[RMDB]
RNA sequence: GGGAACGACUCGAGUAGAGUCGAAAAUUGGCUCAUGCAGGUUCUAGAGUCGGAGGGUAAUGCGUGAGGCUGGCUUCACAGAGCAGCGACUACUUCCCGCUUACAGCAGUGGACGGAUCACGGUUUAGCGUCGCUCAGAACCACUAUGGCCUGCUGGCUGACGCAAUAACUUCGGUUAUUGCGUCAGAAAAGAAACAACAACAACAAC
Reactivity to 2A3 in 0.01 (KOAc 150mM, MgCl2 10mM, bicine 150mM(pH8.5), 24C), signal-to-noise 1, nucleotides 027 to 156: u000u030g030g000c020u030c200a010u040g070c190a030g040g000u080u000c040u080a090g010a050g030u100c130g080g000a090g040g120g020u090a090a000u150g090c040g000u090g040a050g000g200c040u070g050g040c130u050u080c000a010c000a060g030a010g090c000a000g000c000g070a030c030u230a100c000u070u020c000c050c000g020c000u020u100a090c090a110g000c010a020g030u020g020g020a050c050g000g020a000u020c000a000c040g090g040u000u080u090a010g010c040g020u030c010g000c000u000c000a020g030a030a000c000c000a000c050u070a070u030g000g000c000c020u000g000c000u050g040g030